[RMDB]
RNA sequence: GGGAACGACUCGAGUAGAGUCGAAAACAUUGCAGCUUCGGCUGCAAUGAAUCUCUGGUCUCUACGACUCUACUGGAUAGAGGCUGGAGUAGUCGUUCCCGAUGGCGCCCCAAUUCGUUGGGGCGAAUAAUGUGCAAUAGUUCGCUAUUGCACAUUAAAAAGAAACAACAACAACAAC
Reactivity to DMS in 0.01 (KOAc 150mM, MgCl2 10mM, bicine 150mM(pH8.5), 24C), signal-to-noise 4, nucleotides 027 to 126: c000a010u000u000g010c000a010g010c000u000u010c210g030g020c000u000g000c000a000a000u000g010a130a090u010c010u000c000u000g000g000u000c000u000c000u000a060c090g000a050c010u000c030u000a020c020u000g010g010a190u000a010g010a010g000g000c020u010g010g000a030g010u000a030g010u000c000g010u000u000c000c000c000g010a070u020g000g000c010g020c000c000c010c000a010a030u000u010c180g010u000u000g000g000g010g020c000g000a010a020
Reactivity to 2A3 in 0.01 (KOAc 150mM, MgCl2 10mM, bicine 150mM(pH8.5), 24C), signal-to-noise 4, nucleotides 027 to 126: c000a010u000u010g010c000a010g000c000u040u120c220g170g000c000u000g000c000a000a000u000g000a000a010u040c000u010c010u030g000g020u010c010u000c000u030a060c090g100a030c010u000c010u040a030c030u080g160g040a090u050a090g000a000g010g000c020u030g010g000a000g000u020a000g010u000c000g010u000u000c000c000c000g000a080u080g090g070c010g000c010c000c000c000a010a020u030u020c030g030u040u010g000g010g000g000c000g000a000a000